[RMDB]
RNA sequence: GGGAACGACUCGAGUAGAGUCGAAAAGAUAUGGAUCCGUCCACGCUUCGAUGAAAUUGGUCGGAAACGACCAAUGGAGAAGGUGGCGGAUCCUAAGUCAAACCGCUAGGCCUUCGGGCCUAGCGGACGGAGGAUGUAUGUUCGCAUACAUCCUCCGAAAAGAAACAACAACAACAAC
Reactivity to 2A3 in 0.01 (KOAc 150mM, MgCl2 10mM, bicine 150mM(pH8.5), 24C), signal-to-noise 3, nucleotides 027 to 126: g020a000u100a060u180g020g000a010u030c000c010g240u210c150c010a100c130g300c060u080u040c090g300a300u080g040a020a020a010u010u000g010g000u000c000g010g100a110a060a030c000g010a020c010c010a000a000u010g000g000a020g000a010a000g140g010u000g000g000c000g000g010a000u000c000c000u010a000a000g010u010c020a070a050a070c000c000g030c000u000a000g000g010c020c030u030u300c300g080g070g000c000c000u030a010g010c020g030g000a000
Reactivity to DMS in 0.01 (KOAc 150mM, MgCl2 10mM, bicine 150mM(pH8.5), 24C), signal-to-noise 2, nucleotides 027 to 126: g000a060u000a300u010g000g000a000u000c000c000g010u000c000c000a010c030g000c100u000u000c010g000a170u030g020a080a160a010u010u000g020g030u000c000g020g010a060a070a180c000g000a020c000c010a000a000u000g000g000a050g000a000a030g000g020u000g010g000c020g010g010a000u000c000c000u000a000a100g020u000c030a150a150a200c010c000g000c000u010a000g010g000c000c000u010u010c250g050g010g030c000c000u000a000g000c000g000g000a010